[RMDB]
An RNA of 177 nucleotides, treated with 2A3 and DMS and read out base by base. Values cover nucleotides 27 to 126. For DMS the reverse transcriptase was MarathonRT. For 2A3 the reverse transcriptase was SuperScript II with manganese. The RNA was probed in 150 mM KOAc, 10 mM MgCl2 and 150 mM bicine (pH 8.5) at 24 C. For DMS, 3,660 sequencing reads were counted.
RNA sequence: GGGAACGACUCGAGUAGAGUCGAAAAUAAAACCGCGAAGAGAACCAAGCCUUGAGACACAAGGAGGGAUGUCUCAAGGCAUGGUUCUCGACUAGUGUCGAGUCGUUCCCAAUCCCUCCGCAAAAAACAAAUCAUAAAGAUUCGUCUUUAUGAUUUGAAAAGAAACAACAACAACAAC
Reactivity to 2A3 in 0.01 (KOAc 150mM, MgCl2 10mM, bicine 150mM(pH8.5), 24C), signal-to-noise 3, nucleotides 027 to 126: u070a000a100a010a010c050c040g070c100g120a150a080g100a010g000a080a000c000c010a050a000g000c010c000u000u010g000a000g000a000c000a000c010a040a050g000g000a000g000g000g000a000u000g000u010c000u000c000a000a000g000g010c010a000u000g000g000u000u000c000u000c000g000a000c000u040a020g130u010g100u140c010g000a000g010u000c000g010u000u000c000c010c000a000a000u000c000c000c000u000c000c000g010c010a080a090a010a000a000a000
Reactivity to DMS in 0.01 (KOAc 150mM, MgCl2 10mM, bicine 150mM(pH8.5), 24C), signal-to-noise 3, nucleotides 027 to 126: u010a060a060a100a100c120c120g020c110g020a110a170g010a140g010a000a000c000c010a030a080g000c020c010u000u000g020a000g020a010c010a070c260a040a030g020g000a020g010g010g010a040u000g000u010c000u000c000a020a010g010g020c000a000u000g000g010u000u000c000u000c000g000a020c020u010a050g000u010g020u000c000g010a000g010u000c010g010u000u000c000c020c010a020a010u000c010c000c000u000c010c000g020c130a000a020a070a070a060a070